[RMDB]
Structure probing data (DMS and 2A3) for a 177-nucleotide construct. For DMS the reverse transcriptase was MarathonRT. The reactions ran in a buffer of 150 mM KOAc, 10 mM MgCl2 and 150 mM bicine (pH 8.5), at 24 C. For DMS, 1,446 sequencing reads were counted. The data come from the RNA Mapping Database (RMDB), library RFM100.
RNA sequence: GGGAACGACUCGAGUAGAGUCGAAAACUCCUUAUUACGAAGAGAUUGCGGGAUGUGGGUGCAGAGUGGGAAAAUCUGAGUUCGGUCAUCUUUGUUGUUCGUCCUACCGCAGUAUAUUCCUAAACACGUCCUUGGCAUAAUUCGUUAUGCCAAGGACAAAAGAAACAACAACAACAAC
Reactivity to DMS in 0.01 (KOAc 150mM, MgCl2 10mM, bicine 150mM(pH8.5), 24C), signal-to-noise 1, nucleotides 027 to 126: c100u010c000c010u010u080a160u010u080a030c070g020a080a080g000a010g030a030u000u000g000c090g000g000g020a000u020g000u010g000g060g040u000g000c070a080g010a100g070u010g010g090g040a040a020a050a030u030c100u040g010a120g060u030u030c060g000g000u000c010a030u010c000u000u000u030g000u010u000g020u060u000c000g000u040c020c000u000a170c040c040g000c070a030g040u000a170u000a060u010u040c030c000u030a030a030a030c300a220c290
Reactivity to 2A3 in 0.01 (KOAc 150mM, MgCl2 10mM, bicine 150mM(pH8.5), 24C), signal-to-noise 2, nucleotides 027 to 126: c030u030c030c030u100u140a120u130u150a140c180g090a070a020g060a030g010a180u060u050g050c030g030g000g020a070u060g080u120g060g000g000u010g050c040a000g040a050g050u050g020g040g000a070a050a000a000u040c080u020g010a040g010u130u070c030g010g040u000c000a030u000c020u080u110u000g020u000u020g020u020u070c010g000u020c020c010u010a040c010c020g000c010a000g000u030a000u000a000u080u040c030c000u030a060a150a000c020a000c100